[RMDB]
RNA sequence: GGGAACGACUCGAGUAGAGUCGAAAACUGAUUCUGUGGGUGCACAGAAUGCAAGAGCUGUGGUGGCAUGCCUUCCUCCUCCCAGAUGUCAAAGCCUAUCUCAGAGAAGGCCCAUGCGGAGAACUGCCACAGGGGUGGAACCAUCACAGACAGCCUAUAAAUUAUCAUUAUUCGUAAUGAUAAUUUAAAAAGAAACAACAACAACAAC
Reactivity to 2A3 in 0.01 (KOAc 150mM, MgCl2 10mM, bicine 150mM(pH8.5), 24C), signal-to-noise 5, nucleotides 027 to 156: c020u020g010a020u000u010c000u000g000u020g020g060g060u300g070c000a010c000a010g020a000a020u050g030c050a090a050g030a050g120c010u000g000u010g000g010u010g000g020c100a100u140g050c030c000u150u280c020c010u050c000c000u020c010c000c010a050g070a220u140g080u140c110a100a080a030g000c000c000u150a280u110c040u040c100a080g100a010g020a180a010g010g000c000c030c000a030u060g020c060g030g000a020g020a070a090c090u150g060c060c030a080c060a060g000g000g000g010u020g000g010a020a020c000c000a000u010c000a010c010a000g030a050c010a000g050c020c020u130a100
Reactivity to DMS in 0.01 (KOAc 150mM, MgCl2 10mM, bicine 150mM(pH8.5), 24C), signal-to-noise 3, nucleotides 027 to 156: c060u000g010a070u000u000c010u000g040u010g000g020g050u000g010c010a070c010a010g010a030a210u000g000c060a110a100g000a150g010c020u000g010u020g010g010u000g010g010c050a130u010g030c050c030u000u000c020c020u000c020c010u000c010c010c030a110g030a140u000g030u000c040a100a090a250g040c240c040u020a070u000c010u000c050a140g010a150g010a050a040g000g000c050c020c050a080u000g020c040g020g010a150g010a080a110c060u010g030c030c060a060c050a070g010g000g020g030u010g020g020a100a050c030c010a030u000c000a020c020a030g000a070c040a070g010c020c030u000a280

Notes: Chemical mapping of a 207-nucleotide RNA with 2A3 and DMS. For DMS the reverse transcriptase was MarathonRT. The RNA was probed in 150 mM KOAc, 10 mM MgCl2 and 150 mM bicine (pH 8.5) at 24 C. 2A3 adducts were read by reverse transcription with SuperScript II with manganese. For DMS, 5,771 sequencing reads were counted.